[RMDB]
RNA sequence: GGGAACGACUCGAGUAGAGUCGAAAAGGGGUCUUGAAAUCUCCUUGGAUUUAGGUUGCUUUUGACGAGCUGAAGCCUCCACGGCUCGAUAAGCAACCUUGUCAGGAGUUUCAAGACGGAGGCACCCAAAAGACGGGAACGUUCGCGUUCCCGUCAACCAUACCAGUCAGUUCGCUGACUGGUAUGGAAAAGAAACAACAACAACAAC
Reactivity to 2A3 in 0.01 (KOAc 150mM, MgCl2 10mM, bicine 150mM(pH8.5), 24C), signal-to-noise 2, nucleotides 027 to 156: g070g020g020g000u000c020u010u010g010a040a060a050u170c030u000c010c030u040u150g170g000a060u200u300u160a000g020g000u000u000g020c030u120u020u100u210g220a120c040g000a000g020c000u000g030a080a020g030c000c040u040c000c030a060c000g010g000c000u000c020g080a100u030a140a020g000c000a010a010c020c000u000u040g000u010c000a010g000g010a010g000u010u000u000c000a000a000g000a000c010g010g000a000g000g010c010a030c000c010c000a000a150a020a080g010a000c000g000g000g000a010a020c000g050u080u120c260g010c000g110u000u000c030c000c000g000u000c010a000a000
An RNA of 207 nucleotides, treated with 2A3 and read out base by base. Values are in units of 0.01, from 0 to 300, in steps of 10. Conditions: 150 mM KOAc, 10 mM MgCl2 and 150 mM bicine (pH 8.5), 24 C.